[RMDB]
This 207-nucleotide RNA was probed chemically with DMS and 2A3.
Source: RMDB library ARCHII, as collected in RNAgym.
The 2A3 profile rests on 1,630 reads.
In probing experiments dimethyl sulfate is read out at A N1 and C N3, which are open when not base-paired.
The RNA was probed in 150 mM KOAc, 10 mM MgCl2 and 150 mM bicine (pH 8.5) at 24 C.
RNA sequence: GGGAACGACUCGAGUAGAGUCGAAAACACUCUAUUUUCGAAUAGAGUGCCUUUGGGCGUGUGGUCUAGUGGUAUGAUUCUCGCUUUGGGUGCGAGAGGCCCUGGGUUCAAUUCCCAGCUCGCCCCCCAUCUAAAUGAUCACUUUCGAGUGAUCAAAAGAGAAAAAUGGAUUCGUCCAUUUUUCUCUAAAAGAAACAACAACAACAAC
Reactivity to DMS in 0.01 (KOAc 150mM, MgCl2 10mM, bicine 150mM(pH8.5), 24C), signal-to-noise 2, nucleotides 027 to 156: c000a020c000u000c000u000a000u010u010u000u010c210g020a040a060u010a020g020a040g030u000g020c030c030u000u000u020g000g010g020c010g010u030g000u000g010g020u000c050u060a130g030u020g040g050u000a070u000g010a200u000u000c000u010c010g030c050u000u010u020g040g000g030u000g030c030g030a080g000a040g000g010c040c030c020u010g010g050g020u000u000c150a050a300u000u010c000c000c020a080g010c050u000c020g010c000c010c010c020c000c000a060u000c060u000a050a050a140u010g010a000u010c000a010c000u000u020u010c200g040a070g040u010g010a010u000c000a030a030a080
Reactivity to 2A3 in 0.01 (KOAc 150mM, MgCl2 10mM, bicine 150mM(pH8.5), 24C), signal-to-noise 2, nucleotides 027 to 156: c010a000c000u010c000u000a000u010u020u070u080c100g070a000a000u000a000g000a000g010u000g010c000c010u130u030u020g000g000g010c000g030u020g010u010g010g000u030c030u020a050g020u050g090g110u130a060u050g020a030u040u040c030u010c010g020c070u110u140u170g240g010g090u160g040c000g010a010g000a010g020g000c010c020c010u000g010g000g000u010u010c000a010a000u000u020c000c000c000a000g000c000u000c000g000c000c000c000c000c000c000a030u050c040u160a120a180a180u110g000a010u020c000a000c000u020u090u090c110g020a000g000u000g000a000u000c000a010a000a010